Annotation
The data come from the RNA Mapping Database (RMDB), library OK1LIB. This 177-nucleotide RNA was probed chemically with 2A3 and DMS. Values cover nucleotides 27 to 126.
RNA sequence: GGGAACGACUCGAGUAGAGUCGAAAAGCCGCGCAGGGCAGCAUUACGGUGGGCACCUUUGUUGCCUUCUGGGCCUGCCUGACAUUGCUGGCGCGGCCGGCAUGCGAUCUGGCGGGGAUGCUGACCACCCGUUGGGUUAAUUCGUUAACCCAACGGGAAAAGAAACAACAACAACAAC
Reactivity to 2A3 in 0.01 (KOAc 150mM, MgCl2 10mM, bicine 150mM(pH8.5), 24C), signal-to-noise 4, nucleotides 027 to 126: g030c010c000g040c020g010c070a110g000g090g000c000a010g000c010a020u050u120a050c010g020g000u030g010g010g010c010a170c040c020u120u080u300g190u120u090g030c020c000u040u040c020u010g000g020g030c000c010u000g000c000c000u010g000a010c020a070u060u150g000c010u050g000g000c110g010c010g250g020c000c000g000g010c010a020u090g060c070g150a190u020c020u050g020g000c010g000g010g000g010a010u020g000c010u020g040a140c000c010a040
Reactivity to DMS in 0.01 (KOAc 150mM, MgCl2 10mM, bicine 150mM(pH8.5), 24C), signal-to-noise 1, nucleotides 027 to 126: g010c000c000g020c070g000c070a240g000g020g000c000a000g030c070a030u020u000a100c150g000g000u000g000g000g050c030a010c060c170u040u000u020g000u010u020g000c090c000u000u050c010u050g000g040g020c050c030u000g050c010c020u000g010a050c150a040u010u000g040c000u040g020g000c030g020c100g000g000c000c010g000g000c040a030u020g000c080g030a090u000c100u020g020g010c030g000g000g000g060a050u020g000c040u010g000a070c000c010a300